[RMDB]
RNA sequence: GGGAACGACUCGAGUAGAGUCGAAAAUCCGAUGUCGAAGCAAUGGCGCAGUCUUAGGCAUCGGCGGUGUCGAAGCAAUGGCGUAGACCUCAGGCACCGAACAUGUAUAUCGGAGCAAGCUUGGCUACACAGAAAUUCAGUUCGCUGAAUUUCUGUGAAAAGAAACAACAACAACAAC
Reactivity to 2A3 in 0.01 (KOAc 150mM, MgCl2 10mM, bicine 150mM(pH8.5), 24C), signal-to-noise 2, nucleotides 027 to 126: u000c010c000g010a010u010g010u020c000g020a010a010g010c070a070a120u170g140g020c090g080c080a020g020u120c020u010u070a030g000g010c010a010u000c000g000g020c000g010g000u010g020u030c010g030a020a000g030c030a030a040u300g050g000c080g080u080a120g050a110c000c010u030c050a010g000g000c010a010c030c010g030a050a020c040a090u190g120u110a210u010a010u160c050g070g010a020g000c040a040a010g010c090u060u070g060g000c010u020a020
Reactivity to DMS in 0.01 (KOAc 150mM, MgCl2 10mM, bicine 150mM(pH8.5), 24C), signal-to-noise 2, nucleotides 027 to 126: u020c000c000g020a010u000g030u010c010g000a070a030g000c070a110a120u000g020g000c060g010c090a100g000u000c000u010u000a120g000g000c000a000u000c010g000g020c030g000g010u000g040u010c010g030a150a080g000c050a130a060u000g000g010c030g050u000a060g010a190c000c010u010c080a060g000g040c000a000c010c000g000a080a060c200a080u030g000u000a130u010a070u010c060g020g000a050g000c060a050a100g020c050u000u000g010g010c030u010a140
This 177-nucleotide RNA was probed chemically with 2A3 and DMS.
The reactions ran in a buffer of 150 mM KOAc, 10 mM MgCl2 and 150 mM bicine (pH 8.5), at 24 C.
For DMS, 1,380 sequencing reads were counted.
For 2A3 the reverse transcriptase was SuperScript II with manganese.
High DMS reactivity at an A or C suggests that its Watson-Crick edge is free.